[RMDB]
RNA sequence: GGGAACGACUCGAGUAGAGUCGAAAAGAUAUGGACUCCUGGUCGAGUAUCACCUCGGAAACGAGGUGAAUACGAUGAGACCUGCGUAGGAUAGAGUCCUAAGUCAAAAGUCUCGUUCGCGAGACAAGCAGAAUUAAGACUUCGGUCUUAAUUCUGCAAAAGAAACAACAACAACAAC
Reactivity to DMS in 0.01 (KOAc 150mM, MgCl2 10mM, bicine 150mM(pH8.5), 24C), signal-to-noise 1, nucleotides 027 to 126: g000a010u000a040u000g000g000a000c000u000c000c010u010g000g010u000c020g010a020g010u030a000u000c010a000c000c000u020c000g020g000a000a020a050c000g020a010g020g010u010g000a040a020u000a000c010g040a200u000g030a290g000a010c010c000u000g010c300g030u040a110g020g010a270u000a120g000a000g000u000c000c010u000a010a110g010u000c020a070a120a080a200g010u000c000u000c000g030u020u050c300g010c060g010a030g000a030c000a100a180
Reactivity to 2A3 in 0.01 (KOAc 150mM, MgCl2 10mM, bicine 150mM(pH8.5), 24C), signal-to-noise 1, nucleotides 027 to 126: g010a000u000a000u080g000g010a010c000u020c000c000u000g000g000u000c010g000a010g010u010a000u000c000a000c000c000u010c040g000g000a010a000a010c000g000a000g000g000u030g000a000a000u000a010c000g120a210u240g060a000g000a010c000c000u040g040c230g300u270a280g250g240a240u100a190g000a000g000u030c010c000u000a000a010g000u000c050a000a080a000a080g000u010c030u000c000g010u130u090c300g050c000g060a000g000a000c000a000a010